[RMDB]
RNA sequence: GGGAACGACUCGAGUAGAGUCGAAAAAAGUUCUACAAAGAAGUUAGAGCUUACCUAGGAAUCUCUUCUGCUUGUGACGGUCUUGCUUCAGCUUAUAGGGCGAAUUCCUUUGAUGUACCUACAUUCUAACGAGGUAGGUUCGCCUACCUCAAAAGAAACAACAACAACAAC
Reactivity to 2A3 in 0.01 (KOAc 150mM, MgCl2 10mM, bicine 150mM(pH8.5), 24C), signal-to-noise 8, nucleotides 027 to 129: a000a000g010u000u000c000u000a020c040a040a160a020g190a100a010g100u100u030a010g000a010g000c000u010u020a040c000c010u010a000g060g070a100a070u050c010u000c000u070u020c030u010g050c060u060u080g030u030g040a040c060g030g030u030c000u040u060g020c000u040u030c020a020g010c010u070u080a080u120a140g030g010g000c040g020a030a050u030u060c000c000u010u010u110g060a080u090g010u030a060c000c010u040a040c030a130u060u070c010u040a040a040c070
Reactivity to DMS in 0.01 (KOAc 150mM, MgCl2 10mM, bicine 150mM(pH8.5), 24C), signal-to-noise 8, nucleotides 027 to 129: a070a010g030u000u000c040u010a050c050a080a130a060g070a130a110g000u070u030a030g000a030g000c020u000u000a030c010c020u030a050g020g010a080a030u000c060u010c040u000u000c000u010g040c120u000u030g040u010g000a130c130g020g000u000c050u000u000g010c040u010u000c000a080g020c070u000u000a070u050a060g020g010g030c080g010a030a050u020u000c010c030u020u040u060g010a070u000g010u000a050c100c020u000a070c150a090u010u000c040u030a080a130c300

The data come from the RNA Mapping Database (RMDB), library 15KLIB. The record gives the reactivity of an RNA of 170 nucleotides to 2A3 and DMS. The 2A3 profile rests on 19,451 reads. For 2A3 the reverse transcriptase was SuperScript II with manganese. For DMS the reverse transcriptase was MarathonRT. The reactions ran in a buffer of 150 mM KOAc, 10 mM MgCl2 and 150 mM bicine (pH 8.5), at 24 C. 2A3 is a SHAPE reagent: it acylates the 2'-hydroxyl of flexible nucleotides of all four kinds.